[RMDB]
RNA sequence: GGGAACGACUCGAGUAGAGUCGAAAACCAUAGAAACCUAAAGAUUAGGUUAUUUUCGUUCUUCAUGUUAUGGAGUGUGAGUGAUGAGGAGCUUGCUCUUUUAAGCUCAUAUUACGUAAUAAGUUAAGUACGCAAAACCUUUCGAGGUUUUGCGUACAAAAGAAACAACAACAACAAC
Reactivity to 2A3 in 0.01 (KOAc 150mM, MgCl2 10mM, bicine 150mM(pH8.5), 24C), signal-to-noise 2, nucleotides 027 to 126: c020c000a020u060a000g120a000a040a000c010c000u030a130a170a000g180a250u180u000a030g000g000u020u020a160u040u210u010u030c120g060u050u000c000u110u050c020a010u150g000u000u030a000u000g030g000a040g050u060g000u000g000a070g000u130g010a030u210g030a020g000g000a000g020c060u000u040g080c000u030c000u050u000u060u060a030a000g000c000u000c000a000u000a040u040u010a000c000g000u000a010a010u060a010a000g110u060u200a190a030